[RMDB]
Chemical mapping of a 177-nucleotide RNA with 2A3 and DMS. For 2A3, 2,557 sequencing reads were counted. The RNA was probed in 150 mM KOAc, 10 mM MgCl2 and 150 mM bicine (pH 8.5) at 24 C. It was measured as part of the RMDB library OK1LIB.
RNA sequence: GGGAACGACUCGAGUAGAGUCGAAAACAUCGAUCAGCGGACACAGUCCGAUGCGCACAAAGGUUUUCAGGUCACGAGCUAUGCGCGUGAGGCGCUCCUGACCCACCAGCGCCACAUACACAAUGCCAACACGCAAGAACUUCGGUUCUUGCGUGUUAAAAGAAACAACAACAACAAC
Reactivity to 2A3 in 0.01 (KOAc 150mM, MgCl2 10mM, bicine 150mM(pH8.5), 24C), signal-to-noise 5, nucleotides 027 to 126: c040a060u160c040g090a090u150c030a020g040c000g020g030a010c100a020c080a300g020u000c010c010g010a030u030g050c070g000c030a040c080a130a100a080g120g000u020u020u000u030c000a010g000g000u000c010a000c010g040a050g000c070u210a090u300g050c030g000c000g030u030g030a030g010g010c000g000c000u000c000c000u030g050a040c010c000c000a010c010c000a000g020c000g020c040c010a020c000a010u270a010c070a010c030a040a150u220g070c070c000
Reactivity to DMS in 0.01 (KOAc 150mM, MgCl2 10mM, bicine 150mM(pH8.5), 24C), signal-to-noise 1, nucleotides 027 to 126: c010a050u000c130g000a210u000c050a020g000c050g000g000a010c060a120c210a110g000u000c000c000g000a010u040g000c300g070c240a090c140a030a050a100g050g010u000u000u000u000c030a050g000g080u000c070a010c000g000a040g000c000u040a110u080g000c000g030c110g000u000g000a110g020g000c020g000c040u000c010c010u030g000a170c060c000c000a230c060c010a130g000c000g000c000c000a070c110a020u040a040c190a080c150a050a100u050g070c220c160